Notes:
This 177-nucleotide RNA was probed chemically with DMS and 2A3. The RNA was probed in 150 mM KOAc, 10 mM MgCl2 and 150 mM bicine (pH 8.5) at 24 C. DMS adducts were read by reverse transcription with MarathonRT.
[RMDB]
RNA sequence: GGGAACGACUCGAGUAGAGUCGAAAAGAUAUGGAAUCCCACAGGGAGACGUGGAUCGGAAACGAUCCAUACGUCAUCGAUCUGUGGAUUCCUAAGUCAAACGCAAAUACGUUCGCGUAUUUGCGAACAUUUCUAGUAUCUUCGGAUACUAGAAAUGAAAAGAAACAACAACAACAAC
Reactivity to DMS in 0.01 (KOAc 150mM, MgCl2 10mM, bicine 150mM(pH8.5), 24C), signal-to-noise 9, nucleotides 027 to 126: g000a010u000a030u010g000g000a020a000u000c100c040c070a020c020a010g000g010g000a020g020a010c000g020u000g000g000a010u000c000g010g000a010a000a020c000g010a010u000c000c000a030u000a020c140g020u000c000a300u000c230g000a020u000c000u000g010u000g000g010a020u000u000c000c000u000a000a080g000u000c000a100a120a270c020g000c000a000a010a010u000a000c000g020u010u010c280g030c020g030u000a010u000u000u000g000c010g010a070a130
Reactivity to 2A3 in 0.01 (KOAc 150mM, MgCl2 10mM, bicine 150mM(pH8.5), 24C), signal-to-noise 7, nucleotides 027 to 126: g000a000u010a010u060g000g010a000a010u050c040c050c000a000c020a000g030g010g010a060g010a010c000g030u010g000g000a000u000c000g000g000a010a010a000c000g010a000u000c000c000a000u120a010c020g000u000c000a020u300c020g010a010u000c000u000g010u030g010g000a000u000u000c000c000u000a010a000g000u000c020a110a070a130c020g000c000a000a010a010u010a010c020g030u040u100c300g000c010g200u020a010u000u020u010g000c000g000a020a000